[RMDB]
RNA sequence: GGGAACGACUCGAGUAGAGUCGAAAAGAGUUGAUUUGCCCCCCUUCUUCGAGCUUUUCGGCUUUUGCCGGGUUUCAACAGAGUGUGAACCGCUCGACCAACACUAAACAAUACACAGGGCAAUUAAGAUGCUAUGAACUUUCGAGUUCAUAGCAUCAAAAGAAACAACAACAACAAC
Reactivity to 2A3 in 0.01 (KOAc 150mM, MgCl2 10mM, bicine 150mM(pH8.5), 24C), signal-to-noise 6, nucleotides 027 to 126: g100a030g050u060u120g040a110u050u040u150g010c010c000c000c000c010c010u020u050c000u020u030c040g030a030g020c050u210u080u120u050c000g000g020c020u100u140u140u220g000c020c000g020g000g020u050u050u080c040a100a070c030a040g210a040g160u280g030u020g080a010a010c000c000g020c010u010c000g000a020c010c030a100a070c050a020c070u230a100a150a060c060a100a060u150a070c060a000c040a120g000g000g000c000a010a020u060u020a080a040
Reactivity to DMS in 0.01 (KOAc 150mM, MgCl2 10mM, bicine 150mM(pH8.5), 24C), signal-to-noise 3, nucleotides 027 to 126: g010a100g000u000u010g010a090u000u010u010g000c000c000c000c000c030c050u000u010c030u010u000c030g010a030g010c040u000u010u020u000c000g010g000c000u000u000u020u010g040c000c000g010g000g010u000u010u000c060a050a080c060a240g020a150g000u030g010u020g020a040a040c040c010g010c000u000c000g020a100c110c060a070a110c180a060c170u030a030a060a080c170a030a050u000a120c200a070c160a080g010g000g030c010a040a060u000u010a110a110